An RNA of 177 nucleotides, treated with 2A3 and DMS and read out base by base.
RNA sequence: GGGAACGACUCGAGUAGAGUCGAAAACGGGAAAGCGCGAGGGCAGCUGACGCCCUUGAGGUGAGGAAAGUCCCCCCUCCUCGGCGGUAUCCGGCUGGCGCAAGCCAGCAUCCUGAGAGGGAUGGUACAAACGCCUUGUUUUCGAACAAGGCGUUUGAAAAGAAACAACAACAACAAC
Reactivity to 2A3 in 0.01 (KOAc 150mM, MgCl2 10mM, bicine 150mM(pH8.5), 24C), signal-to-noise 3, nucleotides 027 to 126: c040g010g010g020a070a080a070g090c020g000c010g010a030g020g030g040c040a070g050c090u140g040a040c090g000c000c000c000u000u010g040a040g000g040u170g040a170g000g050a070a090a020g150u110c000c000c000c000c000c000u000c010c000u030c020g020g000c000g020g040u120a070u040c020c010g020g020c010u000g000g000c030g000c030a000a030g000c010c010a000g000c010a010u020c000c000u070g010a050g050a080g060g030g000a030u030g050g030u070a030
Reactivity to DMS in 0.01 (KOAc 150mM, MgCl2 10mM, bicine 150mM(pH8.5), 24C), signal-to-noise 3, nucleotides 027 to 126: c040g040g000g000a020a110a140g010c020g000c010g000a010g020g000g010c020a110g040c120u040g000a150c060g030c000c010c030u000u020g000a150g000g000u030g000a060g000g010a110a090a110g020u040c040c000c010c080c030c120u000c010c020u000c010g020g000c040g040g000u010a040u050c040c050g010g050c000u000g000g010c000g010c300a070a160g000c000c010a030g000c010a010u000c020c020u010g000a160g000a080g000g000g000a010u000g010g020u010a090

Conditions: 150 mM KOAc, 10 mM MgCl2 and 150 mM bicine (pH 8.5), 24 C. For DMS, 4,631 sequencing reads were counted.